[RMDB]
Chemical mapping of a 207-nucleotide RNA with 2A3. It was measured as part of the RMDB library RNAMAK.
RNA sequence: GGGAACGACUCGAGUAGAGUCGAAAACCCUUUAACUUUCGAGUUAAAGGGAAAAACCGUAGGCUCCUUCAUUGAGUCGGUGUUCGAAAGAGCAUGGCCGACAAUGAUGUGACUGGGAGCCUAAACGGAAAAAUGAAGAUGCUUCGGCAUCUUCAAAGAUUCCUGGAUAGUUCGCUAUCCAGGAAUCAAAAGAAACAACAACAACAAC
Reactivity to 2A3 in 0.01 (KOAc 150mM, MgCl2 10mM, bicine 150mM(pH8.5), 24C), signal-to-noise 1, nucleotides 027 to 156: c000c000c040u040u000u000a020a000c010u030u090u120c210g020a010g020u000u010a000a000a000g050g000g000a220a000a000a000a000c000c000g000u000a000g020g000c000u010c000c020u080u080c030a040u020u030g020a020g000u010c000g000g020u050g000u000u000c020g050a130a150a110g050a020g030c050a080u130g300g000c050c080g020a000c000a030a300u140g030a050u050g050u050g080a060c270u170g040g000g000a000g080c000c000u020a020a000a000c010g000g060a110a000a000a000a050u060g000a000a000g000a000u010g000c030u080u090c240g140g000c010a000u000c000u000u000c000a000a000a000
Source information
The RNA was probed in 150 mM KOAc, 10 mM MgCl2 and 150 mM bicine (pH 8.5) at 24 C. As a SHAPE reagent, 2A3 marks flexible, mostly unpaired nucleotides at the ribose 2'-OH.